[RMDB]
RNA sequence: GGGAACGACUCGAGUAGAGUCGAAAAUGCACACGCCAUCGGUCAUGAUGAGGUCGAGCGCGAAAUAUUCAAUGAAGAACUGCGCAUUGUUCUUCAGCGACUGGCCGUAAAGCGUAUGCAGGAUGGAGCUGCAUGAAAAUUUCGAUUUUCAUGCAGCAAAAGAAACAACAACAACAAC
Reactivity to 2A3 in 0.01 (KOAc 150mM, MgCl2 10mM, bicine 150mM(pH8.5), 24C), signal-to-noise 3, nucleotides 027 to 126: u020g000c000a020c010a000c000g030c010c010a070u090c010g010g000u010c030a030u100g110a030u050g010a030g030g020u000c010g020a000g020c060g010c020g060a060a100a010u180a030u040u090c130a180a210u260g060a060a040g020a030a010c040u080g030c030g010c150a210u040u040g030u020u020c000u000u000c000a010g020c020g070a040c050u010g020g000c010c000g010u020a110a020a000g010c000g010u010a000u000g000c000a010g050g020a060u110g030g030a080
Reactivity to DMS in 0.01 (KOAc 150mM, MgCl2 10mM, bicine 150mM(pH8.5), 24C), signal-to-noise 3, nucleotides 027 to 126: u020g010c000a010c040a020c000g010c010c030a300u010c000g030g020u000c010a010u000g020a140u000g010a060g010g000u010c010g000a060g020c030g000c020g020a050a050a070u000a090u010u000c060a150a200u010g000a040a030g000a060a060c070u020g020c040g020c050a160u000u000g000u000u000c010u010u010c000a030g010c140g020a150c170u000g000g000c010c020g000u000a060a090a090g010c020g020u000a020u000g010c020a010g000g000a170u000g000g000a290